About this RNA
This 207-nucleotide RNA was probed chemically with DMS and 2A3. Conditions: 150 mM KOAc, 10 mM MgCl2 and 150 mM bicine (pH 8.5), 24 C. For 2A3 the reverse transcriptase was SuperScript II with manganese.
RNA sequence: GGGAACGACUCGAGUAGAGUCGAAAAUUGAUGUUAAUAGCACUGUCGAGGACAUACUUAGUAAACUCCCUAACAGGACUACACCUGAGUUUGACCUCGACAUUUUCAAUGCUACAUACCUCAACUUGACUGGUGAGAUAGCAGAUUUAACGGCUAGGUAACCAGAAGUUUUCGAACUUCUGGUUACAAAAGAAACAACAACAACAAC
Reactivity to DMS in 0.01 (KOAc 150mM, MgCl2 10mM, bicine 150mM(pH8.5), 24C), signal-to-noise 2, nucleotides 027 to 156: u000u020g020a130u010g000u000u000a190a110u000a060g030c000a080c120u000g030u010c010g010a020g040g030a230c030a090u000a020c000u010u010a040g010u010a150a170a120c270u000c000c000c020u000a130a160c200a060g030g020a090c020u000a140c080a160c300c040u000g020a050g030u000u000u000g000a100c030c010u000c020g010a020c010a000u000u000u000u000c170a070a100u010g020c000u000a040c060a200u000a010c020c000u000c020a010a040c010u000u000g000a170c070u000g000g010u010g010a110g030a080u000a010g030c040a040g000a190u000u000u000a060a160c050g010g010c020u000a040g000
Reactivity to 2A3 in 0.01 (KOAc 150mM, MgCl2 10mM, bicine 150mM(pH8.5), 24C), signal-to-noise 4, nucleotides 027 to 156: u070u050g030a020u060g020u090u090a130a090u030a200g000c010a000c100u040g000u000c000g000a000g010g000a020c000a020u050a000c000u000u000a000g000u070a060a120a100c030u040c000c000c010u010a050a010c020a050g010g000a010c040u090a040c080a020c020c000u020g000a000g010u000u060u020g030a050c000c000u000c000g000a000c000a000u000u000u000u030c020a040a070u040g000c010u030a020c020a070u190a040c010c020u060c020a050a120c070u140u170g080a050c060u100g020g020u070g050a070g010a090u030a010g010c000a000g030a110u050u080u090a090a020c030g040g000c050u050a040g100